[RMDB]
RNA sequence: GGGAACGACUCGAGUAGAGUCGAAAAAGCAACGAGUGUGUGUGGGACGUUUUAUCCCAAGCUCUCAGUAGAGCACGCGCUCACACACACCGCGAGCGAGCAUCAGCAGAGCGCAAACGCUGGUAAAAUCUUUAACGGUUUUCGAACCGUUAAAGAUAAAAGAAACAACAACAACAAC
Reactivity to DMS in 0.01 (KOAc 150mM, MgCl2 10mM, bicine 150mM(pH8.5), 24C), signal-to-noise 6, nucleotides 027 to 126: a110g000c040a160a040c040g010a230g020u000g000u000g010u000g010u000g000g000g000a070c020g010u000u000u010u010a110u010c040c040c030a090a110g010c000u000c010u000c220a170g010u010a090g010a010g000c010a090c100g000c040g000c010u000c000a010c010a030c000a010c000a010c000c020g010c020g000a200g000c010g010a100g010c080a040u000c020a030g010c030a090g010a120g010c090g010c110a070a070a090c140g010c020u000g000g020u020a040a050a110
Reactivity to 2A3 in 0.01 (KOAc 150mM, MgCl2 10mM, bicine 150mM(pH8.5), 24C), signal-to-noise 4, nucleotides 027 to 126: a010g070c050a060a060c020g030a090g060u000g000u000g000u000g000u000g010g010g030a030c000g010u020u050u100u210a120u080c000c020c000a010a010g000c000u010c000u020c050a250g120u300a010g150a010g000c010a010c020g010c010g010c000u010c010a000c000a000c000a000c000a000c000c010g040c010g000a010g000c020g000a030g030c000a030u050c010a000g010c020a010g030a050g140c070g010c120a070a070a030c070g010c010u010g000g000u060a080a120a000